[RMDB]
RNA sequence: GGGAACGACUCGAGUAGAGUCGAAAAUGGAACUGAGUAGCCAUGACCGUCCGGUAGAUAUUCUUCAUGAUGGUUUUGAUUGCGUGAUACGCACUGGCGCGUUACCGGAAGAUGGCGUUAUCGCCCAAGUAGGCUAGGUCUUCGGACCUAGCCUACUAAAAGAAACAACAACAACAAC
Reactivity to 2A3 in 0.01 (KOAc 150mM, MgCl2 10mM, bicine 150mM(pH8.5), 24C), signal-to-noise 1, nucleotides 027 to 126: u120g020g020a030a030c120u070g070a040g120u130a010g040c070c000a020u070g060a040c010c010g000u000c010c000g040g000u010a030g050a110u160a080u180u040c000u040u010c040a080u120g040a060u100g140g030u050u100u100u110g170a170u080u210g020c000g020u070g020a050u110a070c040g000c040a030c090u090g080g060c040g070c030g020u020u040a040c000c010g000g010a010a000g030a070u020g010g000c030g000u020u090a040u040c070g000c000c000c000a040
Reactivity to DMS in 0.01 (KOAc 150mM, MgCl2 10mM, bicine 150mM(pH8.5), 24C), signal-to-noise 2, nucleotides 027 to 126: u020g040g000a030a080c130u000g010a190g020u010a300g020c030c020a010u010g000a250c140c080g000u000c010c030g000g010u000a050g040a110u000a200u000u000c020u010u000c160a100u000g020a030u000g000g000u000u000u000u000g000a080u000u010g010c080g000u000g020a060u000a150c020g020c020a150c200u000g000g000c030g000c070g000u000u000a020c040c030g000g010a050a100g000a140u000g000g030c030g020u020u000a130u000c040g000c020c000c060a050